[RMDB]
RNA sequence: GGGAACGACUCGAGUAGAGUCGAAAAGCCAAGCGGAUGAAGGAACAUAUGGCUCUCCGGUCGUGAACGCUUCCGUCGAUAGCGUGUCCUCUUCGAGUCCACAGUCGGCAAGGUCGCUGCCCUGAUGGGUGGCUGACCUGGUUGAUGAUUAGUCCCGCCUAUUCAGUUAGUUCGCUAACUGAAUAGGAAAAGAAACAACAACAACAAC
Reactivity to 2A3 in 0.01 (KOAc 150mM, MgCl2 10mM, bicine 150mM(pH8.5), 24C), signal-to-noise 4, nucleotides 027 to 156: g040c010c010a050a020g050c060g070g020a060u080g090a150a150g110g030a100a030c060a090u250a110u200g060g030c000u010c020u040c040c030g000g020u040c040g020u030g090a070a030c030g020c030u080u040c040c050g080u100c040g060a070u090a060g010c030g020u070g130u050c000c010u040c020u060u050c040g020a010g010u000c030c020a090c080a100g030u030c010g000g000c020a020a010g010g010u010c000g000c010u010g000c010c010c000u110g200a300u300g010g000g010u040g030g000c080u180g000a000c000c000u000g020g000u010u020g000a060u010g020a040u060u110a020g090u010c000c000c000g000
Reactivity to DMS in 0.01 (KOAc 150mM, MgCl2 10mM, bicine 150mM(pH8.5), 24C), signal-to-noise 3, nucleotides 027 to 156: g020c020c020a070a210g010c050g020g030a080u010g010a100a070g030g010a100a090c070a100u000a130u010g010g000c000u010c020u010c060c020g050g040u000c050g010u000g010a120a080c050g020c000u000u000c010c060g020u010c060g010a090u010a050g020c020g040u000g000u000c030c040u010c040u010u000c010g000a100g010u000c010c050a070c050a160g020u000c010g000g010c010a050a010g030g020u000c010g020c000u000g010c000c000c000u010g010a150u010g020g030g020u000g000g030c020u020g010a010c000c000u000g000g040u000u000g010a060u010g020a170u000u000a120g000u000c000c010c010g020

Structure probing data (2A3 and DMS) for a 207-nucleotide construct.
For 2A3 the reverse transcriptase was SuperScript II with manganese.
For DMS the reverse transcriptase was MarathonRT.
The RNA was probed in 150 mM KOAc, 10 mM MgCl2 and 150 mM bicine (pH 8.5) at 24 C.
The 2A3 profile rests on 3,379 reads.